Chemical mapping of a 177-nucleotide RNA with 2A3 and DMS. For DMS, 7,307 sequencing reads were counted. For 2A3, 6,353 sequencing reads were counted. Source: RMDB library OK2TRN, as collected in RNAgym. Conditions: 150 mM KOAc, 10 mM MgCl2 and 150 mM bicine (pH 8.5), 24 C.
[RMDB]
RNA sequence: GGGAACGACUCGAGUAGAGUCGAAAACCACUGGAAACACGAUUAAAACCAAUUUACGACAUUUUUCGUAGAGAUGCUUUCAAUAUUGCCUCCAGGUUAGUUUUAAUCAAGAAUUGACGAUUUUCAACAUUUAUUAUGCAUUCGUGCAUAAUAAAUGAAAAGAAACAACAACAACAAC
Reactivity to 2A3 in 0.01 (KOAc 150mM, MgCl2 10mM, bicine 150mM(pH8.5), 24C), signal-to-noise 6, nucleotides 027 to 126: c000c000a020c070u070g050g090a050a090a030c050a020c110g010a020u030u030a020a020a010a010c010c010a050a040u050u060u080a020c030g020a010c060a170u180u190u090u110u070c030g010u030a010g010a010g010a080u070g020c020u070u130u080c080a160a130u060a130u220u160g020c000c010u000c020c010a020g110g000u030u040a010g000u020u030u000u060a020a030u040c040a060a070g070a120a140u070u140g060a040c050g070a060u110u060u070u080c030a020a040
Reactivity to DMS in 0.01 (KOAc 150mM, MgCl2 10mM, bicine 150mM(pH8.5), 24C), signal-to-noise 7, nucleotides 027 to 126: c010c010a280c100u000g000g000a030a050a070c060a030c120g010a020u000u000a010a020a020a010c120c030a050a140u000u010u000a010c010g010a070c300a170u010u010u000u010u000c010g020u000a020g000a040g000a100u000g010c100u000u000u010c100a040a050u000a030u010u000g000c050c010u000c010c040a050g010g010u010u000a030g010u000u000u000u000a020a080u020c120a100a160g000a060a110u010u000g000a080c090g000a130u000u000u000u000c070a080a220